[RMDB]
Structure probing data (2A3 and DMS) for a 177-nucleotide construct. It was measured as part of the RMDB library M2PK50. For 2A3, 5,606 sequencing reads were counted. Values cover nucleotides 27 to 126. The RNA was probed in 150 mM KOAc, 10 mM MgCl2 and 150 mM bicine (pH 8.5) at 24 C.

RNA sequence: GGGAACGACUCGAGUAGAGUCGAAAAGGGUUACCGUUCGCGGUAACCCAAAUAAAAUCAGCGGUAAGCUCCCGUAAAAUAUUACCGGUGAACGGGAGCUUAAAAUCGAUGUGUUCGCACAUCGAAAGGAAGUUAAUUAGUUCGCUAAUUAACUUCCAAAAGAAACAACAACAACAAC
Reactivity to 2A3 in 0.01 (KOAc 150mM, MgCl2 10mM, bicine 150mM(pH8.5), 24C), signal-to-noise 3, nucleotides 027 to 126: g000g010g000u000u000a000c020c010g010u020u060c250g000c010g090g000u000a000a000c000c000c010a010a000a000u000a000a030a010a060u090c030a000g090c030g110g050u030a010a000g000c000u000c010c000c000g000u020a020a050a090a070u190a070u060u150a030c040c030g090g020u070g040a020a000c010g000g010g010a000g000c000u000u000a000a000a000a030u040c000g000a000u010g000u010g020u010u040c140g020c040a010c000a000u010c010g010a010a000a000
Reactivity to DMS in 0.01 (KOAc 150mM, MgCl2 10mM, bicine 150mM(pH8.5), 24C), signal-to-noise 3, nucleotides 027 to 126: g010g010g020u000u000a010c000c000g030u010u020c240g020c000g020g010u000a000a000c000c000c000a010a010a040u000a040a080a090a100u010c060a070g020c100g000g010u000a010a010g010c000u000c000c000c000g020u000a030a100a080a120u010a080u010u000a090c110c070g000g010u000g020a140a000c010g010g000g000a020g000c010u000u000a000a050a080a110u010c000g010a000u000g010u000g010u010u000c200g010c020a000c000a010u000c000g000a020a050a110